[RMDB]
RNA sequence: GGGAACGACUCGAGUAGAGUCGAAAAGGAGCUCGAUGCUAUGUGAUAACUAGCACGUUAGUUUUCACCACUGAAACACGCUUCAGUGAAGUUAUGAUCGCGUGCUCGUAACUUAUAGCAUCGAGAAGAUACGAUUCAGAUUCGUUUGAGUUGUAUCAAAAGAAACAACAACAACAAC
Reactivity to DMS in 0.01 (KOAc 150mM, MgCl2 10mM, bicine 150mM(pH8.5), 24C), signal-to-noise 9, nucleotides 027 to 126: g000g010a130g010c000u000c000g010a010u000g000c000u000a000u000g010u000g010a020u010a030a020c010u000a030g010c180a110c210g010u030u000a020g010u000u000u000u000c010a010c020c010a000c000u000g000a000a030a110c150a090c250g000c120u000u000c000a000g010u000g000a010a020g000u000u010a010u010g000a020u010c070g010c100g010u020g010c220u000c010g000u000a020a020c000u000u000a010u000a000g010c000a000u000c000g010a010g000a030a040
Reactivity to 2A3 in 0.01 (KOAc 150mM, MgCl2 10mM, bicine 150mM(pH8.5), 24C), signal-to-noise 9, nucleotides 027 to 126: g130g010a050g030c000u000c000g000a000u000g000c000u000a000u000g020u000g020a050u030a120a010c010u000a010g030c050a030c120g040u050u040a030g010u020u020u000u020c010a000c000c000a000c000u000g010a010a030a010c140a020c110g100c080u000u000c000a000g000u000g030a050a010g010u040u050a020u030g010a020u040c030g000c040g060u060g000c000u000c000g000u000a010a000c000u020u040a000u000a000g000c000a000u000c000g000a000g000a000a000